[RMDB]
RNA sequence: GGGAACGACUCGAGUAGAGUCGAAAAGGGAGCCUGAUGGACCUGCCCAUCACGGGCAGCGUGGAGGGCCAGUUUGAUGCCGGCUACUUUGUGAGCGUCGUUGCCGGCGGGCAGGAGUUCCGAGGCAACUUAGCUUAUGCUUCGGCAUAAGCUAAGUAAAAGAAACAACAACAACAAC
Reactivity to 2A3 in 0.01 (KOAc 150mM, MgCl2 10mM, bicine 150mM(pH8.5), 24C), signal-to-noise 4, nucleotides 027 to 126: g050g040g020a050g010c010c020u100g050a190u170g040g020a020c000c010u000g000c000c000c020a050u130c090a040c110g070g030g020c010a000g020c030g010u080g040g050a070g030g000g000c020c010a020g010u030u110u250g170a150u220g020c000c020g020g050c020u180a300c050u300u140u170g160u150g120a090g110c050g060u050c010g000u050u010g000c000c030g060g000c050g000g000g000c010a000g030g020a030g060u110u010c000c010g010a020g010g000c000a010
Reactivity to DMS in 0.01 (KOAc 150mM, MgCl2 10mM, bicine 150mM(pH8.5), 24C), signal-to-noise 5, nucleotides 027 to 126: g010g020g000a160g010c010c000u000g010a300u010g000g010a140c020c010u000g010c000c000c000a090u010c160a130c140g010g010g020c030a020g000c050g020u010g020g010a070g000g010g010c000c020a050g010u000u010u010g000a150u020g000c010c020g010g010c000u000a080c020u000u010u000g000u010g000a110g000c090g010u010c060g000u000u000g010c000c000g010g020c110g000g000g010c040a030g000g010a130g000u010u000c010c010g010a050g010g000c040a130